[RMDB]
RNA sequence: GGGAACGACUCGAGUAGAGUCGAAAAGAUAUGGAGGGUCUACUCCCUAUGUGGACAUGCUCUGCGUAGGAUAGGAUCGGAAACGAUCCCUGAGCAACAGCCACUAGGGAGUAGACCCUCCUAAGUCCACUAUCGCUUUCUUCGGAAAGCGAUAGUGAAAAGAAACAACAACAACAAC
Reactivity to DMS in 0.01 (KOAc 150mM, MgCl2 10mM, bicine 150mM(pH8.5), 24C), signal-to-noise 1, nucleotides 027 to 126: g020a140u000a300u000g000g020a020g010g000g040u010c000u010a010c000u010c000c000c000u010a010u060g080u000g000g010a070c070a240u000g020c040u000c010u010g020c180g030u010a260g040g020a150u010a140g000g000a000u010c010g020g010a090a110a300c000g010a010u000c020c000c030u000g000a060g000c000a020a070c210a090g000c010c000a000c010u000a010g020g000g000a020g020u000a000g000a000c020c000c000u000c000c000u000a000a060g000u000c010